The data come from the RNA Mapping Database (RMDB), libraries RFM100 and RFMREP. The record gives the reactivity of an RNA of 177 nucleotides to 2A3 and DMS. DMS (dimethyl sulfate) methylates the pairing face of unpaired adenines and cytosines. DMS adducts were read by reverse transcription with MarathonRT. 2A3 adducts were read by reverse transcription with SuperScript II with manganese.
RNA sequence: GGGAACGACUCGAGUAGAGUCGAAAACGGAGGCUGGCUUUGCUGUUUGAGGUUUUGGUCCUUUAGGACAGGGGACUGCCUUCCUGGAAAGUGGUCUCCGGUUGUUCCUCGUUCCUGGAAGAUGGCGCUAUCUAAAAAAGUUCGCUUUUUUAGAUAGAAAAGAAACAACAACAACAAC
Reactivity to 2A3 in 0.01 (KOAc 150mM, MgCl2 10mM, bicine 150mM(pH8.5), 24C), signal-to-noise 9, nucleotides 027 to 126: c000g000g000a000g000g000c030u130g080g050c010u100u030u070g070c010u070g100u200u130u200g030a010g010g040u070u080u190u280g050g000u030c010c000u040u050u110a180g050g050a030c050a040g010g000g000g010a000c000u010g000c000c000u060u070c010c010u010g010g070a020a000a010g010u020g010g000u000c000u000c000c000g000g000u020u160g000u000u010c000c000u000c000g000u010u010c000c010u020g040g050a100a040g060a100u100g030g000c040g000
Reactivity to DMS in 0.01 (KOAc 150mM, MgCl2 10mM, bicine 150mM(pH8.5), 24C), signal-to-noise 8, nucleotides 027 to 126: c020g000g000a020g000g010c010u000g010g030c010u000u000u000g010c010u000g000u020u030u020g010a030g000g010u000u010u030u020g020g000u000c000c000u000u010u020a110g010g010a180c190a080g000g000g000g000a020c000u000g000c030c010u000u000c210c030u000g010g000a020a020a020g020u000g000g010u000c000u000c000c010g000g010u010u000g010u000u000c010c000u000c010g010u000u000c000c000u000g010g010a070a080g010a070u010g000g010c120g000